Overview
An RNA of 207 nucleotides, treated with DMS and 2A3 and read out base by base. Reactivities are given for positions 27 through 156. The data come from the RNA Mapping Database (RMDB), library OK3TST. Values are in units of 0.01, from 0 to 300, in steps of 10.
[RMDB]
RNA sequence: GGGAACGACUCGAGUAGAGUCGAAAAUAAGUGGCCUGCCAACUAACAUGGAUUGGAGGAAGGGAGUGGUGGUCAAGAAACAAAGAAGAUGACAGAAUUAAGUCCUCCUGGAAGACCUGAUAGUGGUUCUGUUUAAUUUUACAUUUUAACACGGAUACGACCAGUAAUUAUUCGUAAUUACUGGUCGAAAAGAAACAACAACAACAAC
Reactivity to DMS in 0.01 (KOAc 150mM, MgCl2 10mM, bicine 150mM(pH8.5), 24C), signal-to-noise 3, nucleotides 027 to 156: u000a090a080g040u000g000g020c010c040u010g050c020c040a060a130c070u010a070a140c090a070u000g030g020a200u000u000g040g030a160g030g020a070a090g000g010g010a100g020u000g020g030u010g000g010u000c080a080a060g000a140a110a120c060a060a090a150g020a070a070g020a130u000g040a100c040a090g000a080a070u000u000a040a120g070u000c010c020u000c030c030u010g000g030a090a130g010a030c020c010u020g020a110u000a160g020u010g010g030u000u000c020u000g010u000u000u000a060a100u000u000u010u010a070c070a110u000u000u000u010a060a100c060a090c060g000g010a080u000a130
Reactivity to 2A3 in 0.01 (KOAc 150mM, MgCl2 10mM, bicine 150mM(pH8.5), 24C), signal-to-noise 2, nucleotides 027 to 156: u090a080a030g080u040g050g040c000c010u030g050c020c000a060a000c040u100a040a010c010a160u120g000g060a110u060u150g010g010a030g010g030a030a030g030g010g010a010g010u050g000g030u010g000g000u030c030a020a000g020a050a140a020c080a030a100a000g050a030a010g030a030u070g010a010c010a010g080a050a050u130u110a100a030g000u020c000c000u040c000c000u010g010g080a030a020g030a050c010c060u040g110a100u040a120g080u030g040g020u070u000c010u010g030u000u060u040a050a060u000u060u090u090a030c030a050u060u120u050u080a090a040c100a000c110g030g000a040u080a160